[RMDB]
RNA sequence: GGGAACGACUCGAGUAGAGUCGAAAACGGCGUUGAUGGGUUAUCACUCGUAAUCUUCUGCUUGCAGGAGGCCCGUUCUUCAGGCAUCUGUCUGUUGAACAACCCCGCGUUCCUCACGGUUCGCACCCAUUAGUAAGUGGUUCGCCACUUACUAAUGAAAAGAAACAACAACAACAAC
Reactivity to DMS in 0.01 (KOAc 150mM, MgCl2 10mM, bicine 150mM(pH8.5), 24C), signal-to-noise 7, nucleotides 027 to 126: c040g010g000c170g010u010u000g020a040u000g010g010g010u000u010a170u000c080a050c030u000c040g010u010a100a140u010c020u000u000c020u000g000c030u000u010g020c040a040g000g000a060g010g010c040c040c040g010u000u000c000u000u000c010a010g010g010c000a180u010c270u010g020u000c000u010g010u000u000g000a020a060c030a100a170c040c020c020c140g010c030g000u000u000c010c000u000c140a120c210g010g000u000u000c060g020c100a170c100c060
Reactivity to 2A3 in 0.01 (KOAc 150mM, MgCl2 10mM, bicine 150mM(pH8.5), 24C), signal-to-noise 6, nucleotides 027 to 126: c010g030g020c090g060u080u140g050a080u110g020g130g020u100u120a110u120c030a010c050u040c030g040u060a070a110u040c010u060u000c010u020g020c030u060u160g010c030a020g000g030a020g020g010c000c040c030g010u000u000c000u000u010c000a010g000g000c010a130u100c300u190g010u010c000u020g010u010u010g010a010a010c000a010a030c020c000c000c030g030c010g020u010u010c010c010u080c040a050c050g020g010u030u030c020g010c010a060c010c010
Chemical mapping of a 177-nucleotide RNA with DMS and 2A3. 2A3 adducts were read by reverse transcription with SuperScript II with manganese. Source: RMDB library RFMREP, as collected in RNAgym. Conditions: 150 mM KOAc, 10 mM MgCl2 and 150 mM bicine (pH 8.5), 24 C.